[RMDB]
RNA sequence: GGGAACGACUCGAGUAGAGUCGAAAAAGGUUCAUUAUUGUUACGUGUUGGUAAAGAAACGCAAGUGUAUCGUUAUUUCGGUCAAGAACGUAACAAUACCACUUACAACUUAGCGCGCAUGAACAUGGAUGAAAACAUCAUUCGUGAUGUUUUCAUCAAAAGAAACAACAACAACAAC
Reactivity to DMS in 0.01 (KOAc 150mM, MgCl2 10mM, bicine 150mM(pH8.5), 24C), signal-to-noise 4, nucleotides 027 to 126: a080g010g010u010u020c040a070u010u010a020u010u010g000u000u000a010c020g010u010g000u000u030g000g020u010a050a070a090g000a030a040a020c140g010c150a070a130g050u010g010u030a090u020c030g000u010u010a070u010u000u000c070g000g000u010c020a030a040g000a080a000c000g000u000a000a000c000a010a000u010a030c110c070a150c120u020u000a060c190a080a080c050u000u020a040g000c010g010c020g000c050a020u010g000a010a030c050a120u020g000
Reactivity to 2A3 in 0.01 (KOAc 150mM, MgCl2 10mM, bicine 150mM(pH8.5), 24C), signal-to-noise 9, nucleotides 027 to 126: a000g140g010u070u030c060a060u050u070a010u030u010g010u000u010a020c020g010u040g030u040u090g020g050u060a090a120a070g050a020a050a000c020g010c140a120a140g080u110g080u290a160u150c020g000u000u050a150u060u160u050c020g020g010u020c010a010a030g040a130a010c000g000u000a000a000c000a000a000u010a030c000c010a080c060u120u190a050c030a150a040c050u040u120a030g020c040g010c010g010c070a010u010g020a020a010c030a080u090g120